[RMDB]
RNA sequence: GGGAACGACUCGAGUAGAGUCGAAAACGUACGUGGAGACACGUACGACGAGACUUCGGUCUCGAAUUGCAAGAACUUGGGCCUUGCGCGCGCGAGGCGUCGGUGCUCGGCUAGCGCACGGACGCAAAAACUCGCGCGUAAAUAAAUAGCUUAAGAACGUCAUCGAUGACUUCGGUCAUCGAUGACGAAAAGAAACAACAACAACAAC
Reactivity to 2A3 in 0.01 (KOAc 150mM, MgCl2 10mM, bicine 150mM(pH8.5), 24C), signal-to-noise 1, nucleotides 027 to 156: c000g020u000a000c020g000u010g000g000a050g020a010c000a000c000g000u000a000c000g020a000c000g000a000g010a000c010u110u150c240g100g010u020c000u020c010g060a040a140u180u080g000c000a010a000g010a090a040c020u030u050g000g030g000c000c000u010u010g000c010g000c020g020c020g000c000g030a020g030g000c000g000u000c000g140g000u020g000c010u040c020g220g020c110u170a040g020c000g000c030a030c030g130g000a020c020g000c080a070a020a000a120a120c000u000c010g000c040g010c000g000u000a000a000a000u030a000a040a000u190a000g020c030u020u000a050a000g040a070a020
Description:
Chemical mapping of a 207-nucleotide RNA with 2A3.